Structure probing data (DMS) for a 177-nucleotide construct. Values cover nucleotides 27 to 126. The RNA was probed in 150 mM KOAc, 10 mM MgCl2 and 150 mM bicine (pH 8.5) at 24 C. It was measured as part of the RMDB library RFMREP.
RNA sequence: GGGAACGACUCGAGUAGAGUCGAAAAUGUUGAAUAGCCCUGCCUGGGGGCUGCCGCAAGGCGCUAUCAGGACGUGGAUUAGUCGGGCAGUGCCACGGUUCGAGAAAACCCCGACAGCCAAUGGAACGGAAAUAGAUACGUUCGCGUAUCUAUUUCCAAAAGAAACAACAACAACAAC
Reactivity to DMS in 0.01 (KOAc 150mM, MgCl2 10mM, bicine 150mM(pH8.5), 24C), signal-to-noise 1, nucleotides 027 to 126: u010g000u000u000g000a090a140u030a090g000c010c040c040u010g040c000c000u000g000g000g000g020g010c000u010g000c000c000g000c300a110a130g040g010c010g030c020u000a030u000c000a040g000g020a060c040g000u000g000g010a020u010u010a190g040u000c000g010g010g010c130a140g060u000g040c010c000a010c000g000g000u010u000c010g010a100g000a020a000a060a110c090c000c030c010g010a010c010a170g000c070c090a090a090u000g010g000a090a080c140